[RMDB]
The record gives the reactivity of an RNA of 177 nucleotides to 2A3 and DMS.
RNA sequence: GGGAACGACUCGAGUAGAGUCGAAAAGAGACCAGGUUGCUAUUACGGGUCCAUUGGAUGUAAACGCAGAGCUAUCUAAGGUGAAUGCAUCCAUCAGCAACGCACAGACUGCCCUUGACCGUAGCAAAAGUCGACUAUUUUUCGAAAUAGUCGACUUAAAAGAAACAACAACAACAAC
Reactivity to 2A3 in 0.01 (KOAc 150mM, MgCl2 10mM, bicine 150mM(pH8.5), 24C), signal-to-noise 3, nucleotides 027 to 126: g100a010g020a000c020c000a050g030g100u060u000g000c010u020a030u120u140a100c080g060g000g070u010c030c020a080u040u070g000g000a010u010g010u060a030a120a030c020g000c040a050g020a040g190c060u120a100u230c040u080a140a120g120g000u030g040a080a040u050g000c000a010u000c030c010a040u060c010a000g040c000a030a050c020g000c060a040c010a010g150a060c010u060g000c000c000c000u000u080g060a050c030c040g020u040a020g000c010a060a100
Reactivity to DMS in 0.01 (KOAc 150mM, MgCl2 10mM, bicine 150mM(pH8.5), 24C), signal-to-noise 5, nucleotides 027 to 126: g010a110g000a070c030c040a080g010g020u000u000g000c030u010a070u010u000a070c120g020g010g010u000c050c080a120u000u010g020g010a010u010g000u000a010a070a300c050g010c050a060g000a120g000c220u030a100u010c070u000a120a100g010g010u000g010a070a240u000g010c000a010u000c010c010a020u010c120a050g000c060a060a050c100g020c100a080c130a090g010a110c060u000g010c020c010c020u010u000g010a090c040c030g020u010a060g020c100a050a070

For 2A3, 2,891 sequencing reads were counted.
2A3 adducts were read by reverse transcription with SuperScript II with manganese.